[RMDB]
RNA sequence: GGGAACGACUCGAGUAGAGUCGAAAACUCAAGAGGAUACAACAGGGCUGCAUCAAAAGACAAGUCUUUGGACCAUGUCAAGACCUGGAGCGAAGAAGGUAAUGAACUCCUACUUCAUAGCAGGCUGUGGGCCAGCAGUUUGCUACUACGCUGUCUAAUAAUUAUUACCAUUCGUGGUAAUAAUUAUAAAAGAAACAACAACAACAAC
Reactivity to DMS in 0.01 (KOAc 150mM, MgCl2 10mM, bicine 150mM(pH8.5), 24C), signal-to-noise 2, nucleotides 027 to 156: c030u000c050a120a110g000a140g030g010a140u010a080c040a080a070c040a090g010g040g000c000u020g020c030a110u000c070a060a110a060a160g020a060c010a050a100g000u000c030u000u010u010g040g030a040c010c050a070u000g030u000c010a090a110g000a050c030c010u000g000g010a070g000c040g000a080a100g000a090a050g010g040u000a050a120u000g000a100a080c070u000c000c010u000a040c040u000u000c070a150u000a020g040c020a040g000g000c040u000g040u010g000g020g020c090c060a160g020c030a020g020u020u000u000g000c020u000a010c050u010a060c080g000c000u020g010u000c020u000a070
Reactivity to 2A3 in 0.01 (KOAc 150mM, MgCl2 10mM, bicine 150mM(pH8.5), 24C), signal-to-noise 3, nucleotides 027 to 156: c050u050c020a040a030g080a040g050g020a020u060a150c040a110a010c030a120g050g000g040c020u060g030c040a070u090c080a080a090a050a050g040a050c060a060a020g020u030c000u120u090u170g080g010a010c060c050a120u110g030u070c020a050a000g030a060c000c040u040g050g020a040g040c060g010a020a020g040a010a020g030g020u110a090a110u130g040a050a020c030u040c020c010u040a090c020u080u050c030a030u050a030g010c010a000g000g040c000u010g000u050g040g100g030c030c020a010g010c000a000g000u000u030u010g020c000u030a050c040u060a030c060g040c080u070g010u060c020u020a040

About this RNA:
An RNA of 207 nucleotides, treated with DMS and 2A3 and read out base by base. For 2A3 the reverse transcriptase was SuperScript II with manganese. In probing experiments dimethyl sulfate is read out at A N1 and C N3, which are open when not base-paired. Conditions: 150 mM KOAc, 10 mM MgCl2 and 150 mM bicine (pH 8.5), 24 C. Source: RMDB library OK3TST, as collected in RNAgym.